This 177-nucleotide RNA was probed chemically with DMS and 2A3. For DMS the reverse transcriptase was MarathonRT. The data come from the RNA Mapping Database (RMDB), library OK2TRN. For 2A3, 3,286 sequencing reads were counted. Conditions: 150 mM KOAc, 10 mM MgCl2 and 150 mM bicine (pH 8.5), 24 C.
RNA sequence: GGGAACGACUCGAGUAGAGUCGAAAAUACACCUCCUGGGCAAGGGCACGCUGAGACGCCAUGACGACCGGCCCCAGGUGCUGUCCUAUGCAGUCCCUGUGACUGUCAUGGAGCCUCACACUGAGUCAGAGAGUAUAGGGUUCGCCCUAUACUCUCUAAAAGAAACAACAACAACAAC
Reactivity to DMS in 0.01 (KOAc 150mM, MgCl2 10mM, bicine 150mM(pH8.5), 24C), signal-to-noise 5, nucleotides 027 to 126: u020a150c130a130c080c010u000c030c030u000g020g010g010c050a090a110g000g010g010c060a060c130g000c120u000g010a060g000a050c080g000c030c020a030u000g000a050c030g010a110c200c150g020g000c010c010c040c030a030g000g010u000g010c040u010g000u010c090c160u000a120u010g010c000a010g010u000c190c010c090u000g010u010g010a030c020u000g000u000c030a010u000g000g000a060g010c030c020u010c020a050c080a110c090u000g000a180g000u000c100
Reactivity to 2A3 in 0.01 (KOAc 150mM, MgCl2 10mM, bicine 150mM(pH8.5), 24C), signal-to-noise 2, nucleotides 027 to 126: u120a000c020a040c010c000u040c010c030u040g030g030g010c010a050a050g040g020g000c070a020c120g040c100u030g020a010g020a030c030g020c000c000a040u040g000a010c050g080a080c060c120g070g000c020c020c030c000a010g000g000u020g000c000u010g000u090c040c030u110a140u300g000c020a010g000u040c030c000c030u050g030u090g010a030c050u090g000u030c000a020u010g000g020a020g000c000c000u010c000a040c000a010c050u050g020a020g070u070c070